An RNA of 207 nucleotides, treated with DMS and 2A3 and read out base by base. The 2A3 profile rests on 6,150 reads. For DMS, 10,429 sequencing reads were counted. DMS adducts were read by reverse transcription with MarathonRT. The reactions ran in a buffer of 150 mM KOAc, 10 mM MgCl2 and 150 mM bicine (pH 8.5), at 24 C.

RNA sequence: GGGAACGACUCGAGUAGAGUCGAAAAGGGAAGUUCGCUUCCCCACAGGCGUACUACGGUCCUUUUGACGGAAGUCCCACUACCCACCGUGUCCCAAAUAGGACACGAGGUGGGCUUCCGAUAAGGACCGUAUCGCGGUCUUGCACUUCGGUGCAAAAGUUGUUAUUUGAUUCGUCAAAUAACAACUAAAAGAAACAACAACAACAAC
Reactivity to DMS in 0.01 (KOAc 150mM, MgCl2 10mM, bicine 150mM(pH8.5), 24C), signal-to-noise 3, nucleotides 027 to 156: g020g030g040a040a020g010u000u000c280g030c010u000u000c000c000c010c010a040c160a090g010g020c010g020u000a110c060u000a020c010g010g020u000c000c010u000u010u000u000g020a280c090g020g000a050a030g010u000c010c000c000a040c030u000a020c030c000c020a300c150c010g000u000g010u000c000c000c020a040a200a240u010a060g010g010a030c000a010c010g000a020g030g010u000g010g000g000c020u000u000c010c000g020a030u000a000a030g000g000a020c000c000g010u000a000u000c050g010c050g010g010u000c020u000u000g030c000a010c010u000u000c200g040g010u000g000c010a020a010a090
Reactivity to 2A3 in 0.01 (KOAc 150mM, MgCl2 10mM, bicine 150mM(pH8.5), 24C), signal-to-noise 2, nucleotides 027 to 156: g030g020g010a020a020g010u100u130c170g080c110u000u000c000c000c030c000a070c040a060g120g000c010g020u110a060c080u000a000c030g010g010u000c020c000u050u070u080u170g230a110c030g000g080a000a020g200u300c010c010c010a000c010u120a120c020c070c030a030c050c000g000u000g000u010c040c020c020a220a300a080u300a120g000g010a000c000a000c000g000a010g000g000u000g000g000g000c000u000u000c000c000g010a010u010a010a000g000g000a010c000c010g000u010a010u010c000g000c010g010g050u030c060u040u040g000c000a000c000u050u070c290g140g000u000g000c000a030a030a030

For 2A3 the reverse transcriptase was SuperScript II with manganese.